[RMDB]
RNA sequence: GGGAACGACUCGAGUAGAGUCGAAAAGCGAAUCCGAUGAUAAAGGACGUAGGCUAGAGGAUCGAAGACGAUUAGAGAGACCGUUGUAGUUCUAGCAGUAAACGAUGCCGAUACCGUGGUGCGGAUAGUCCCAACGGAAUUUCGAUUCCGUUGGGACAAAAGAAACAACAACAACAAC
Reactivity to DMS in 0.01 (KOAc 150mM, MgCl2 10mM, bicine 150mM(pH8.5), 24C), signal-to-noise 2, nucleotides 027 to 126: g070c140g000a030a020u010c000c000g000a020u030g000a100u040a060a020a220g040g010a070c050g000u040a090g050g010c060u000a000g000a000g010g010a090u000c050g000a180a140g050a020c010g000a080u040u060a090g000a000g020a130g010a110c050c070g020u000u000g000u010a210g000u040u030c000u000a040g000c050a110g020u080a050a100a070c000g010a120u000g020c000c030g000a140u020a050c020c030g000u000g000g000u010g000c050g010g000a060u050a080
Reactivity to 2A3 in 0.01 (KOAc 150mM, MgCl2 10mM, bicine 150mM(pH8.5), 24C), signal-to-noise 3, nucleotides 027 to 126: g010c040g020a020a090u050c000c030g010a150u180g100a040u080a110a130a040g020g020a000c040g000u040a060g000g080c000u000a010g000a010g030g030a060u090c040g000a040a030g080a070c040g010a020u130u230a090g050a010g000a000g040a130c010c030g000u030u080g040u070a040g000u010u040c000u020a010g010c040a010g010u170a010a070a020c070g090a090u130g010c010c010g030a030u040a030c020c010g000u060g040g000u030g000c000g020g000a020u020a070
Annotation:
The data come from the RNA Mapping Database (RMDB), library RFM100. Chemical mapping of a 177-nucleotide RNA with DMS and 2A3. For DMS, 1,808 sequencing reads were counted. 2A3 adducts were read by reverse transcription with SuperScript II with manganese. For 2A3, 1,620 sequencing reads were counted.